Structure probing data (DMS) for a 177-nucleotide construct. Reactivities are given for positions 27 through 126. DMS adducts were read by reverse transcription with MarathonRT. The DMS profile rests on 969 reads.
RNA sequence: GGGAACGACUCGAGUAGAGUCGAAAAAGCCGAAGACCCCAGCACUCACGAUGACGUAGUGUGGGUCAUCCACGAUGAGCGUCGAGGCGUCAUGCUCAAAGUCGCCCCACUGUCGGUCGCCGGUUUGAAGCCAGUCCUUAUUCGUAAGGACUGGCUUAAAAGAAACAACAACAACAAC
Reactivity to DMS in 0.01 (KOAc 150mM, MgCl2 10mM, bicine 150mM(pH8.5), 24C), signal-to-noise 1, nucleotides 027 to 126: a080g060c050c050g040a040a230g000a070c030c000c040c130a080g010c040a040c100u000c130a080c070g040a080u000g040a050c070g030u000a050g030u010g010u030g000g000g020u010c110a100u000c010c040a050c040g000a220u000g030a060g010c000g010u000c140g020a050g020g020c080g000u020c020a060u000g000c050u020c050a020a050a150g010u010c070g000c030c000c000c040a130c150u000g000u010c050g040g000u000c010g000c150c000g010g000u050u000u010g000